[RMDB]
RNA sequence: GGGAACGACUCGAGUAGAGUCGAAAAUUAGGAAAUGAUCUUGUGAAUGCAAAACUUUAGCGUGCUUUGGGACACUAAAAAGCCUUAGGUUUUCAGUAGGAGUGUUUCACUGAUUGGCGAUUGCAUGCUACCCGUCAGAAUUCGUUCUGACGGGUAGAAAAGAAACAACAACAACAAC
Reactivity to 2A3 in 0.01 (KOAc 150mM, MgCl2 10mM, bicine 150mM(pH8.5), 24C), signal-to-noise 2, nucleotides 027 to 126: u130u050a060g080g000a040a060a050u110g050a050u040c030u080u060g040u060g150a160a030u100g020c030a030a010a030a110c040u080u150u210a010g000c070g070u030g020c040u020u050u020g040g040g060a020c000a010c050u100a040a080a060a040a040g060c030c030u060u110a060g000g000u020u030u060u150c060a050g050u090a100g040g110a040g040u010g040u030u060u040c040a060c020u000g030a140u030u120g090g020c030g070a070u010u100g000c000a060u050g030
Reactivity to DMS in 0.01 (KOAc 150mM, MgCl2 10mM, bicine 150mM(pH8.5), 24C), signal-to-noise 2, nucleotides 027 to 126: u010u000a080g020g000a060a080a060u010g000a030u000c050u010u010g040u010g010a120a020u000g000c110a060a040a060a090c120u000u010u000a040g020c080g000u000g000c070u000u000u000g020g020g020a060c100a050c030u000a030a060a040a070a080g010c030c040u010u020a100g020g010u000u000u000u000c080a090g020u020a040g000g010a060g010u010g000u000u000u000c030a060c060u010g000a050u000u000g020g000c050g000a130u000u000g030c070a070u010g010

An RNA of 177 nucleotides, treated with 2A3 and DMS and read out base by base.
It was measured as part of the RMDB library OK2TST.
DMS adducts were read by reverse transcription with MarathonRT.
The RNA was probed in 150 mM KOAc, 10 mM MgCl2 and 150 mM bicine (pH 8.5) at 24 C.
For 2A3 the reverse transcriptase was SuperScript II with manganese.